Overview
Structure probing data (2A3) for a 207-nucleotide construct.
RNA sequence: GGGAACGACUCGAGUAGAGUCGAAAACGAUCAGUACGUUCGCGUACUGAUCGAAGCUACUGGAGACAGUAGCAAGUCUAAGACCUUGUUAGGCGGAAACAAGGGAGGAUGGAGGAAGGCCGGACCUCCAUACUUAGACAACCGCCAACCGGCCAACGAUAGGCUAGCAUUUCGAUGCUAGCCUAUCAAAAGAAACAACAACAACAAC
Reactivity to 2A3 in 0.01 (KOAc 150mM, MgCl2 10mM, bicine 150mM(pH8.5), 24C), signal-to-noise 1, nucleotides 027 to 156: c020g000a000u000c010a000g000u010a010c000g010u020u120c160g000c000g060u000a000c000u000g000a000u000c000g000a000a000g030c010u000a000c000u000g010g010a020g010a050c000a000g000u000a010g000c020a000a040g000u000c020u030a020a070g000a070c000c010u000u000g030u030u050a120g000g180c110g050g150a040a010a000c000a000a000g140g020g050a070g160g010a010u020g000g010a000g000g050a090a240g000g000c080c050g010g060a210c010c000u020c000c000a020u000a050c000u000u020a020g020a020c040a000a010c110c150g020c030c020a000a040c000c000g000g000c010c000a020a020c040

The RNA was probed in 150 mM KOAc, 10 mM MgCl2 and 150 mM bicine (pH 8.5) at 24 C. The data come from the RNA Mapping Database (RMDB), library OK3TST. For 2A3 the reverse transcriptase was SuperScript II with manganese.